[RMDB]
RNA sequence: GGGAACGACUCGAGUAGAGUCGAAAAACACCGUGAAACCUGAGGGUGUCGAUAGGGCCCGGGUGCGCUUCGACAUCACCGUCGAGCCGGCGGGACCGAUCCCCGGCUUCAUCGUCAAGCGGGCAAGACAACCUAGGAUAUUCGUAUCCUAGGUUGUAAAAGAAACAACAACAACAAC
Reactivity to DMS in 0.01 (KOAc 150mM, MgCl2 10mM, bicine 150mM(pH8.5), 24C), signal-to-noise 8, nucleotides 027 to 126: a070c070a120c010c000g000u000g010a130a110a050c030c070u000g010a090g010g010g020u000g010u000c050g000a090u000a050g000g010g010c010c000c090g010g010g030u010g020c120g000c020u000u010c010g010a010c010a060u010c180a100c200c120g000u000c060g000a050g010c020c010g010g010c060g010g000g000a050c080c050g010a090u010c020c010c030c010g010g010c010u000u000c040a050u000c150g000u000c060a060a300g010c020g000g000g000c120a080a070g020
Reactivity to 2A3 in 0.01 (KOAc 150mM, MgCl2 10mM, bicine 150mM(pH8.5), 24C), signal-to-noise 6, nucleotides 027 to 126: a000c050a020c000c000g020u030g070a100a050a030c020c030u080g010a170g050g030g120u030g020u020c030g050a070u150a180g060g020g020c060c080c130g110g090g070u140g000c180g010c020u120u130c020g000a000c000a040u110c080a050c040c050g040u030c010g000a010g010c010c000g040g020c080g020g010g050a080c030c030g020a080u050c000c000c000c010g020g000c000u080u080c030a060u090c020g050u030c010a010a040g020c030g000g030g030c040a050a040g070